[RMDB]
RNA sequence: GGGAACGACUCGAGUAGAGUCGAAAAGAUUCGGCGGCCCUGUCAUGAGGCCGAAACGAAGGCACGUAGCCCUUCGAAUGGCGUCGGGGAGUCAGCGGCUAUAUAUGCGCCUAAUGCUGGCAUCCGGGAGAACCCUCAUCCUUCGGGAUGAGGGUAAUCAAAAAAGACUAUUCGUAGUCUUUUUUGAAAAAGAAACAACAACAACAAC
Reactivity to DMS in 0.01 (KOAc 150mM, MgCl2 10mM, bicine 150mM(pH8.5), 24C), signal-to-noise 3, nucleotides 027 to 156: g000a210u000u000c020g020g010c020g010g010c000c000c010u020g020u000c210a130u000g030a080g020g020c000c000g000a000a050a100c050g010a080a040g020g000c040a130c130g020u000a210g000c100c010c020u000u000c040g010a120a100u000g010g010c010g020u010c020g010g020g010g020a160g030u000c020a040g080c030g020g020c020u010a110u010a120u000a050u010g020c050g010c040c030u010a070a090u000g030c020u000g020g020c020a050u010c020c010g000g000g000a140g000a090a110c010c000c000u010c000a000u000c000c000u000u000c300g050g010g010a000u010g010a020g010g000g010u000a000a020
Reactivity to 2A3 in 0.01 (KOAc 150mM, MgCl2 10mM, bicine 150mM(pH8.5), 24C), signal-to-noise 3, nucleotides 027 to 156: g060a080u130u130c060g050g020c010g000g000c050c000c000u010g010u020c030a030u030g030a010g030g010c020c030g010a010a000a000c000g000a000a000g010g010c010a010c180g140u130a030g000c020c000c000u000u010c010g020a020a020u030g020g010c050g160u020c000g000g000g010g000a160g010u000c000a000g000c010g040g000c020u020a020u020a020u020a040u300g140c100g040c030c030u200a290a070u300g010c020u000g000g000c000a040u000c020c000g000g000g000a150g050a030a040c000c000c000u000c000a010u000c000c000u030u070c170g140g000g000a000u000g010a000g000g000g010u000a000a010
An RNA of 207 nucleotides, treated with DMS and 2A3 and read out base by base. The RNA was probed in 150 mM KOAc, 10 mM MgCl2 and 150 mM bicine (pH 8.5) at 24 C. In probing experiments dimethyl sulfate is read out at A N1 and C N3, which are open when not base-paired. The data come from the RNA Mapping Database (RMDB), library M2RFPK. The DMS profile rests on 8,996 reads. Reactivities are given for positions 27 through 156.